[RMDB]
RNA sequence: GGGAACGACUCGAGUAGAGUCGAAAAUGCCAUUGCACAAACGGAAUUCAAAGUGAUAUUUCAAGCAGGGCGUUCUGUUUAUGUAAACCUUGAGAGCACUUGAUGAAUGUCAGCAGAACUUUGAAAUUAAAAUCACUUCUUUUUUUCAUACGCUGCACCCAUAGGAGCGAUUCGUCGCUCCUAUGGGAAAAGAAACAACAACAACAAC
Reactivity to 2A3 in 0.01 (KOAc 150mM, MgCl2 10mM, bicine 150mM(pH8.5), 24C), signal-to-noise 2, nucleotides 027 to 156: u040g010c010c000a090u090u120g000c040a020c020a040a140a100c110g040g030a040a070u130u100c030a140a030a030g000u000g020a010u030a020u060u050u010c030a030a020g010c030a120g140g150g080c080g010u030u060c000u000g020u020u100u000a070u080g080u130a100a130a130c020c010u140u170g100a110g000a000g110c030a050c110u090u000g010a040u080g080a110a030u100g040u000c000a000g010c010a010g020a030a010c000u040u020u080g020a010a010a010u100u100a080a010a010a100u080c000a020c020u060u090c020u070u120u030u010u020u150u160c010a010u140a050c040g010c090u020g000c010a030
Record summary
Structure probing data (2A3) for a 207-nucleotide construct. The data come from the RNA Mapping Database (RMDB), library OK3TST. The 2A3 profile rests on 607 reads. Conditions: 150 mM KOAc, 10 mM MgCl2 and 150 mM bicine (pH 8.5), 24 C. 2A3 adducts were read by reverse transcription with SuperScript II with manganese.